[RMDB]
The record gives the reactivity of an RNA of 207 nucleotides to 2A3 and DMS. The reactions ran in a buffer of 150 mM KOAc, 10 mM MgCl2 and 150 mM bicine (pH 8.5), at 24 C. It was measured as part of the RMDB library M2RFPK. DMS adducts were read by reverse transcription with MarathonRT.

RNA sequence: GGGAACGACUCGAGUAGAGUCGAAAAGACUGAUGUAGAGUUCGGUUGGAGCGACAAGUAUUUAGCUUGAGAUAGCUAAAUCACCUCGGUAUGAUUAGGGAGAGACCUAGGAACCGUAGGGGUAUUCAAUGCUGUAUUGCGUUCGCGCAAUACAGAAGGUUGAAUAAGGAUUCGUCCUUAUUCAACCAAAAGAAACAACAACAACAAC
Reactivity to 2A3 in 0.01 (KOAc 150mM, MgCl2 10mM, bicine 150mM(pH8.5), 24C), signal-to-noise 4, nucleotides 027 to 156: g040a010c080u060g010a030u110g060u120a030g020a030g040u060u070c030g030g000u020u030g030g010a020g010c070g110a080c030a070a010g040u080a050u000u010u000a000g000c000u020u030g040a030g000a080u130a020g010c000u010a000a020a000u020c020a020c000c010u010c030g020g010u290a180u150g030a020u030u040a020g010g040g000a100g020a010g030a100c000c020u010a020g000g030a030a000c020c000g010u040a030g010g020g000g000u020a080u070u120c110a080a100u180g050c000u000g000u000a000u000u000g010c010g010u010u050c100g000c010g000c130a000a000u000a000c000a000g010a030a040
Reactivity to DMS in 0.01 (KOAc 150mM, MgCl2 10mM, bicine 150mM(pH8.5), 24C), signal-to-noise 2, nucleotides 027 to 156: g000a060c040u000g030a060u000g020u000a100g010a110g030u000u000c060g030g040u000u000g010g020a080g030c030g000a050c050a060a080g020u010a050u000u000u000a020g010c010u000u010g010a240g000a170u000a030g020c000u000a010a000a000u000c010a040c010c010u010c030g010g010u000a120u000g000a180u000u000a050g000g010g020a190g020a200g010a090c000c010u000a050g000g000a090a060c030c020g020u010a080g010g020g000g040u000a060u000u000c050a050a150u000g010c010u000g000u000a020u000u000g020c000g020u000u010c300g000c030g000c000a030a010u000a000c000a010g010a010a030